[RMDB]
RNA sequence: GGGAACGACUCGAGUAGAGUCGAAAAGCGACUUUUUCGUUUUUGCUUUUGCAUGGAUAAUUCAUCCAUGCACAUCUCACUUUAUUGGACCUUCAAGAUUGGUUUCCCAUGUAAUUUAAUUUUCUCUUGUUACAAUACGUUUCGACGUAUUGUAACAAAAAGAAACAACAACAACAAC
Reactivity to 2A3 in 0.01 (KOAc 150mM, MgCl2 10mM, bicine 150mM(pH8.5), 24C), signal-to-noise 9, nucleotides 027 to 126: g020c020g010a040c050u190u110u060u120u110c100g030u040u030u010u050u100g040c010u040u060u050u040g000c000a000u000g000g010a020u020a160a190u300u200c090a000u020c010c000a000u010g000c000a000c010a000u010c020u000c000a070c030u110u140u120a110u090u150g050g020a050c020c010u040u050c110a090a080g030a210u050u070g050g030u050u030u030c020c010c010a040u100g090u110a120a150u070u120u120a070a110u060u030u090u000c010u000c000u010
Reactivity to DMS in 0.01 (KOAc 150mM, MgCl2 10mM, bicine 150mM(pH8.5), 24C), signal-to-noise 3, nucleotides 027 to 126: g000c000g020a040c300u010u000u000u030u010c090g000u000u000u000u000u020g010c050u010u000u000u000g000c000a000u000g000g000a020u010a100a200u040u040c240a110u000c000c000a010u000g000c000a020c300a020u010c010u010c040a110c130u000u010u000a070u010u000g000g000a040c060c030u000u000c090a070a080g010a070u000u000g010g010u000u020u000c050c010c020a110u030g000u010a080a110u000u020u010a060a070u000u000u010u010c020u000c140u010